An RNA of 177 nucleotides, treated with DMS and 2A3 and read out base by base. The 2A3 profile rests on 16,486 reads. The data come from the RNA Mapping Database (RMDB), library TTRDES. For DMS the reverse transcriptase was MarathonRT. The RNA was probed in 150 mM KOAc, 10 mM MgCl2 and 150 mM bicine (pH 8.5) at 24 C.
[RMDB]
RNA sequence: GGGAACGACUCGAGUAGAGUCGAAAAGAUAUGGAUCAAAUUAGGACAUGCUGGUCCAUCGGAAACGAUGGCUACAGCAACAGCCUACUGUUUGAUCCUAAGUCAAAGGCUCCCUUCGGGGAGCCAACCUUCAACUUAAGUUCGCUUAAGUUGAAGGAAAAGAAACAACAACAACAAC
Reactivity to DMS in 0.01 (KOAc 150mM, MgCl2 10mM, bicine 150mM(pH8.5), 24C), signal-to-noise 5, nucleotides 027 to 126: g000a030u000a230u010g000g000a010u010c000a010a020a010u000u000a010g000g000a030c090a290u020g040c000u000g000g000u000c010c000a000u000c010g010g000a050a040a070c010g020a010u000g000g010c130u010a130c010a000g020c000a080a080c270a120g010c020c010u000a010c300u000g010u000u000u000g000a010u000c000c000u010a020a080g000u000c020a090a100a160g010g020c000u000c010c000c010u000u010c240g030g010g010g000a000g010c010c010a010a020
Reactivity to 2A3 in 0.01 (KOAc 150mM, MgCl2 10mM, bicine 150mM(pH8.5), 24C), signal-to-noise 6, nucleotides 027 to 126: g020a010u040a010u090g010g000a000u020c010a000a000a100u160u170a150g030g010a030c250a300u300g010c010u010g010g020u030c000c000a010u000c000g000g000a030a010a020c010g000a000u000g000g000c030u300a270c060a010g000c030a050a070c030a080g110c020c010u030a060c090u060g030u050u000u000g000a000u000c000c000u010a030a010g010u010c040a180a100a140g000g010c000u000c010c030c000u020u050c300g080g000g000g000a000g000c000c000a000a000